[RMDB]
RNA sequence: GGGAACGACUCGAGUAGAGUCGAAAAAAUGUUCUGUUCGCAGAACAUUAAGCUGGUGUCCCGACCAGGCUGGAUGUCAGUACACGAUGUGCCAGAUCGGGAAUGCCUCCGGCUUCGGCCGGAGGAAUAUAUAUUGAGUCUUCGGACUCAAUAUAUAAAAAGAAACAACAACAACAAC
Reactivity to 2A3 in 0.01 (KOAc 150mM, MgCl2 10mM, bicine 150mM(pH8.5), 24C), signal-to-noise 3, nucleotides 027 to 126: a000a010u020g000u010u000c010u010g030u040u060c280g020c070a010g010a010a010c000a000u020u020a060a030g100c040u010g010g000u030g060u020c000c000c000g000a000c000c000a020g170g000c010u000g020g000a020u030g020u050c030a040g100u200a120c040a020c190g030a030u030g040u120g250c020c000a010g000a020u000c000g000g000g010a030a030u070g050c010c010u010c010c000g000g030c050u030u070c260g110g000c030c010g020g010a010g000g000a000a010
Reactivity to DMS in 0.01 (KOAc 150mM, MgCl2 10mM, bicine 150mM(pH8.5), 24C), signal-to-noise 4, nucleotides 027 to 126: a010a000u000g000u000u000c000u000g010u000u010c200g020c000a010g000a010a010c010a000u000u000a040a170g020c020u000g000g010u000g000u000c010c000c000g010a060c010c000a020g000g010c010u000g000g010a100u000g010u000c030a130g010u010a110c230a130c090g000a040u000g030u010g020c010c010a040g000a160u000c010g010g000g010a060a090u020g000c000c010u000c000c000g000g020c010u000u010c210g030g010c010c010g020g000a000g000g000a020a030